[RMDB]
RNA sequence: GGGAACGACUCGAGUAGAGUCGAAAAGAUAUGGAACGGCGAUUCGAAGAACAUAGGGAGGUGUGACGAAGGAUCGGAAACGAUCUCGAACACCGUUGAUCUAUGGGAGAAUCGCCGUUCCUAAGUCGAAUCCGUAUGCGUUCGCGCAUACGGAUUCAAAAGAAACAACAACAACAAC
Reactivity to DMS in 0.01 (KOAc 150mM, MgCl2 10mM, bicine 150mM(pH8.5), 24C), signal-to-noise 1, nucleotides 027 to 126: g000a090u000a300u000g000g000a010a000c000g000g050c000g020a020u000u020c010g000a070a190g070a170a240c020a010u000a010g000g000g000a040g000g000u000g030u000g000a280c190g010a160a100g050g000a010u000c000g030g040a090a150a240c000g010a000u000c010u020c050g030a300a020c040a000c000c010g040u000u000g030a140u040c020u020a020u010g020g000g030a130g010a000a000u000c010g020c000c000g000u000u000c000c000u000a010a080g010u010c110

Record summary:
Structure probing data (DMS) for a 177-nucleotide construct. The reactions ran in a buffer of 150 mM KOAc, 10 mM MgCl2 and 150 mM bicine (pH 8.5), at 24 C. The DMS profile rests on 1,059 reads.